RNA sequence: GGGAACGACUCGAGUAGAGUCGAAAAGAGACGUUGUUCGCAACGUCUCGCAAUAUGCGCCGCUCGCGCGCCGCACUGAGAUCGUCGGGAUCCAGACCGACAACACCCAAGAAUUCGUUCUUGGGAAGUACUCAGUACUCUUCGGAGUACUGAGUACAAAAGAAACAACAACAACAAC
Reactivity to DMS in 0.01 (KOAc 150mM, MgCl2 10mM, bicine 150mM(pH8.5), 24C), signal-to-noise 3, nucleotides 027 to 126: g000a000g010a010c000g020u000u000g020u000u010c200g010c010a000a030c010g000u000c000u000c000g010c160a060a100u000a110u000g000c010g030c230c020g020c030u000c300g000c300g010c000g010c110c020g020c020a060c100u010g000a140g000a070u010c130g020u000c000g010g010g000a050u020c030c040a120g010a090c030c000g000a020c040a140a070c260a210c010c000c000a010a020g000a040a020u000u010c160g010u000u000c000u000u000g000g010g000a000a060
Reactivity to 2A3 in 0.01 (KOAc 150mM, MgCl2 10mM, bicine 150mM(pH8.5), 24C), signal-to-noise 4, nucleotides 027 to 126: g010a000g000a000c000g000u030u040g010u060u090c200g050c110a000a000c010g000u000c010u000c000g000c010a040a080u150a060u180g020c020g000c030c010g040c030u080c080g100c030g000c020g000c050c010g040c010a070c070u220g080a040g040a270u130c090g020u010c020g010g030g010a020u030c000c030a040g080a080c000c010g020a000c010a010a020c060a050c000c000c020a000a010g010a010a000u130u130c220g070u060u000c040u000u010g000g000g010a000a010